[RMDB]
RNA sequence: GGGAACGACUCGAGUAGAGUCGAAAAGCAAAGAAAUUUUAUCCCAAUAAGGCGAAGUAAGCAAGUCGACCCAACGCGAGGGCGCUAGCGAGCAUACGAGCCCUAGCAGAAUAAUCGCGAGAAAAAACAUAUAGCACCGAUUCGUCGGUGCUAUAUGAAAAGAAACAACAACAACAAC
Reactivity to 2A3 in 0.01 (KOAc 150mM, MgCl2 10mM, bicine 150mM(pH8.5), 24C), signal-to-noise 3, nucleotides 027 to 126: g010c040a060a080a050g160a050a200a040u100u160u080u080a110u080c010c000c030a000a090u140a050a000g040g000c020g030a070a000g060u110a020a060g080c080a010a000g030u030c030g090a140c000c000c020a080a020c020g000c000g030a010g010g010g040c040g000c000u010a000g030c030g130a010g030c010a050u120a230c080g040a050g000c000c000c000u000a000g000c010a000g080a230a030u160a110a050u030c010g000c020g030a030g120a070a070a000a000a010a010
Reactivity to DMS in 0.01 (KOAc 150mM, MgCl2 10mM, bicine 150mM(pH8.5), 24C), signal-to-noise 4, nucleotides 027 to 126: g020c170a050a070a050g000a080a080a090u000u000u000u000a160u000c010c000c000a130a090u000a090a080g000g000c000g030a080a120g010u020a040a070g020c080a070a060g010u010c030g000a120c000c000c010a120a110c040g010c030g010a030g000g000g020c100g010c000u000a010g000c110g010a120g060c000a120u010a090c200g020a180g010c000c000c000u010a010g000c030a070g010a070a040u000a060a110u000c000g000c010g010a180g020a000a040a030a090a050a050